[RMDB]
RNA sequence: GGGAACGACUCGAGUAGAGUCGAAAAAAUUAGAGGCAAUUUGAAAUAAUUUAAAUUAGCUCAACCCUACUGCACUUACCGAACUAGAUAAUGGUGUAGUAGGGGUAAAUUCUCCGCAUUCGGUGCGCAACCACCUGAGGUUUCGACCUCAGGUGAACCAUGUUAAAAUGUUCGCAUUUUAACAUGGAAAAGAAACAACAACAACAAC
Reactivity to 2A3 in 0.01 (KOAc 150mM, MgCl2 10mM, bicine 150mM(pH8.5), 24C), signal-to-noise 4, nucleotides 027 to 156: a010a010u170u140a050g010a030g020g020c020a010a010u010u010u040g070a080a080a080u220a100a250u130u110u060a040a060a010u030u040a020g020c010u020c030a010a000c000c000c000u000a000c010u000g000c000a000c010u030u060a020c020c020g050a100a040c030u040a050g060a120u140a300a130u260g000g010u000g000u000a000g000u000a000g000g000g000g000u000a000a000a000u020u000c040u010c020c020g010c010a010u030u030c020g090g020u020g000c010g010c030a040a020c060c000a000c010c010u010g000a000g010g030u030u070u190c190g040a040c000c000u000c000a000g020g000u000g000a000a010
Reactivity to DMS in 0.01 (KOAc 150mM, MgCl2 10mM, bicine 150mM(pH8.5), 24C), signal-to-noise 1, nucleotides 027 to 156: a070a060u000u020a130g000a110g000g010c020a050a050u000u000u000g000a030a090a160u010a050a190u000u000u000a020a070a030u000u000a150g010c010u010c040a190a080c000c000c020u000a000c010u000g000c000a020c010u010u020a050c000c020g000a090a200c170u020a190g000a090u000a060a120u000g010g020u000g020u000a000g020u000a010g010g000g000g000u010a010a020a130u010u000c040u000c030c070g020c090a160u000u010c010g020g020u010g040c030g010c040a060a160c100c000a020c000c010u010g010a020g030g040u010u000u000c270g010a030c000c000u000c010a000g000g020u000g000a000a060
This 207-nucleotide RNA was probed chemically with 2A3 and DMS. For DMS the reverse transcriptase was MarathonRT. Conditions: 150 mM KOAc, 10 mM MgCl2 and 150 mM bicine (pH 8.5), 24 C. For 2A3 the reverse transcriptase was SuperScript II with manganese.